[RMDB]
RNA sequence: GGGAACGACUCGAGUAGAGUCGAAAAGAUGUGCUUGGAUGUCCUCUAUUUGGCUCACUACCUCCGUUUCCACUCUGACUGAAUGGCCAGAUUGCAGGAAAGCUAAUUGAAGUGGCUUCCAUUUGAGGGUAAAAUCAUCGUUCGCGAUGAUUUUACCAAAAGAAACAACAACAACAAC
Reactivity to DMS in 0.01 (KOAc 150mM, MgCl2 10mM, bicine 150mM(pH8.5), 24C), signal-to-noise 1, nucleotides 027 to 126: g050a100u060g020u000g000c070u000u000g000g000a070u020g000u000c030c070u000c030u000a090u090u000u080g010g010c090u000c090a140c140u000a140c030c020u030c100c020g000u010u000u000c000c050a080c080u030c010u000g070a000c000u000g010a070a020u150g000g000c010c080a030g000a120u040u000g010c080a140g000g000a150a090a080g030c030u040a060a100u050u030g000a160a080g060u020g000g010c040u000u010c000c000a180u000u050u000g000a120g030
Reactivity to 2A3 in 0.01 (KOAc 150mM, MgCl2 10mM, bicine 150mM(pH8.5), 24C), signal-to-noise 6, nucleotides 027 to 126: g040a020u220g090u200g120c050u140u130g110g160a220u110g110u110c020c000u020c000u020a090u000u020u020g000g000c010u030c040a100c070u030a120c010c040u040c030c010g010u010u020u020c000c000a040c010u000c020u010g040a040c000u050g110a160a150u200g040g000c000c010a000g010a070u050u150g030c070a040g020g020a100a080a030g020c010u060a120a110u190u200g130a160a030g050u050g010g000c000u030u000c020c030a100u110u070u200g150a120g030
An RNA of 177 nucleotides, treated with DMS and 2A3 and read out base by base. For DMS the reverse transcriptase was MarathonRT. Source: RMDB library OK1LIB, as collected in RNAgym. Conditions: 150 mM KOAc, 10 mM MgCl2 and 150 mM bicine (pH 8.5), 24 C.